[RMDB]
RNA sequence: GGGAACGACUCGAGUAGAGUCGAAAAGAUAUGGAGACCCACGGGAGUUGGCCAGGUAUGCUCCCCUCUAUCGGAAACGAUAGAGGGGAGCAUACCUGGUACAACGAAGAACGUGGUCUCCUAAGUCCUAAACAUACAGGUUCGCCUGUAUGUUUAGAAAAGAAACAACAACAACAAC
Reactivity to DMS in 0.01 (KOAc 150mM, MgCl2 10mM, bicine 150mM(pH8.5), 24C), signal-to-noise 2, nucleotides 027 to 126: g000a190u010a270u020g020g000a030g000a010c220c100c090a010c000g000g000g000a140g000u000u000g010g010c000c010a010g030g010u010a020u000g010c030u000c020c010c000c020u000c010u000a000u020c020g020g000a130a150a280c030g070a040u010a010g040a060g000g020g000g000a000g000c000a000u010a000c010c000u000g000g010u000a010c010a010a000c000g030a070a150g010a120a160c000g030u000g010g000u000c000u000c000c000u000a010a100g010u000c040